[RMDB]
RNA sequence: GGGAACGACUCGAGUAGAGUCGAAAACUAGUGGCUCUGAGUGAGGGUUCCGUCCCCUCUCAUCCAUUACAAACGCCCUUUGCCAGUUCCGUCUGGUGAAGUGUGUGGAAGUCAAGUUCCGUCUUGUCAGAAAAUAAGACUUCGGUCUUAUUUUCUGAAAAGAAACAACAACAACAAC
Reactivity to 2A3 in 0.01 (KOAc 150mM, MgCl2 10mM, bicine 150mM(pH8.5), 24C), signal-to-noise 2, nucleotides 027 to 126: c030u020a000g030u000g000g000c000u000c010u040g000a030g010u050g020a300g060g000g000u300u200c060c000g230u270c020c010c000c000u000c010u030c000a110u230c000c020a010u030u010a030c030a010a070a000c010g010c010c020c000u000u000u000g000c000c000a020g020u050u300c090c040g100u140c100u010g000g000u010g000a010a000g010u030g020u000g000u010g010g030a050a020g070u020c060a060a070g020u000u030c000c020g070u040c050u040u040g050u030
Reactivity to DMS in 0.01 (KOAc 150mM, MgCl2 10mM, bicine 150mM(pH8.5), 24C), signal-to-noise 1, nucleotides 027 to 126: c090u010a080g010u000g000g010c010u000c000u000g000a020g030u020g000a130g050g010g000u000u010c300c240g000u010c030c000c010c020u000c000u000c020a000u000c000c000a000u020u010a040c140a040a160a040c010g010c000c040c000u000u000u000g000c000c000a000g000u000u010c300c200g000u020c000u000g030g010u010g000a000a010g000u000g050u000g030u010g010g000a130a070g000u020c110a070a100g000u000u000c020c040g000u000c040u000u000g000u000